Overview: The data come from the RNA Mapping Database (RMDB), library OK1LIB. An RNA of 177 nucleotides, treated with 2A3 and DMS and read out base by base. For 2A3, 1,240 sequencing reads were counted.

RNA sequence: GGGAACGACUCGAGUAGAGUCGAAAAACUUGUCCAGGGUCUCGACGAGGCAGUGAAUAAAUUCGAGAAUCGCCAGUUCGUUCAGCUCCUCGUCCUUCACACCGACAAUGAAGUAAAGACUCGCAUAGCUCAUUAGGUGGUUCGCCACCUAAUGAGCAAAAGAAACAACAACAACAAC
Reactivity to 2A3 in 0.01 (KOAc 150mM, MgCl2 10mM, bicine 150mM(pH8.5), 24C), signal-to-noise 2, nucleotides 027 to 126: a000c030u080u130g020u050c000c030a030g040g010g000u000c020u030c060g020a020c020g000a010g010g060c160a030g010u010g040a000a060u060a060a060a060u180u120c030g010a000g050a180a210u140c080g010c050c040a080g010u090u070c060g020u030u020c060a090g100c010u000c010c000u000c000g000u020c000c000u010u000c040a090c020a050c080c000g180a040c020a000a040u060g020a010a000g010u060a130a130a000g020a000c020u020c070g000c080a030u180a090
Reactivity to DMS in 0.01 (KOAc 150mM, MgCl2 10mM, bicine 150mM(pH8.5), 24C), signal-to-noise 1, nucleotides 027 to 126: a030c120u030u000g000u000c000c030a250g000g000g140u010c030u000c170g040a140c000g000a000g000g000c250a050g000u000g040a250a030u000a000a020a090u000u000c110g040a190g000a210a090u000c190g010c130c050a050g000u000u000c090g090u020u000c000a130g050c000u000c000c000u000c000g000u000c000c050u000u000c030a010c250a190c000c000g100a000c050a170a070u150g000a030a000g010u000a250a180a060g000a000c000u030c000g010c130a150u010a100
For DMS the reverse transcriptase was MarathonRT.